RNA sequence: GGGAACGACUCGAGUAGAGUCGAAAAAUUCAGGAGAGUAGAUGAUUCGCGUUAAGUGUGUGUGAAUGGGAUGUCGUCACACAACGAAGCGAGAGCGCGGUGAAUCAUUGGAUCCGCUCCAAACGAACACAGGCCAUCUAUUCGUAGAUGGCCUGUGAAAAGAAACAACAACAACAAC
Reactivity to DMS in 0.01 (KOAc 150mM, MgCl2 10mM, bicine 150mM(pH8.5), 24C), signal-to-noise 1, nucleotides 027 to 126: a150u000u010c100a210g010g000a030g030a030g000u000a200g030a000u000g000a030u000u000c000g020c000g020u030u010a070a060g040u000g000u010g000u000g020u000g000a040a010u020g000g020g010a020u010g020u000c230g000u000c000a000c000a000c010a030a030c070g000a160a080g030c020g010a160g000a230g040c000g050c130g000g010u010g000a050a000u000c010a000u000u000g000g010a030u000c010c000g000c000u000c000c000a070a120a060c190g010a020a110
Annotation
Source: RMDB library M2PK90, as collected in RNAgym. An RNA of 177 nucleotides, treated with DMS and read out base by base. For DMS, 1,023 sequencing reads were counted. The reactions ran in a buffer of 150 mM KOAc, 10 mM MgCl2 and 150 mM bicine (pH 8.5), at 24 C.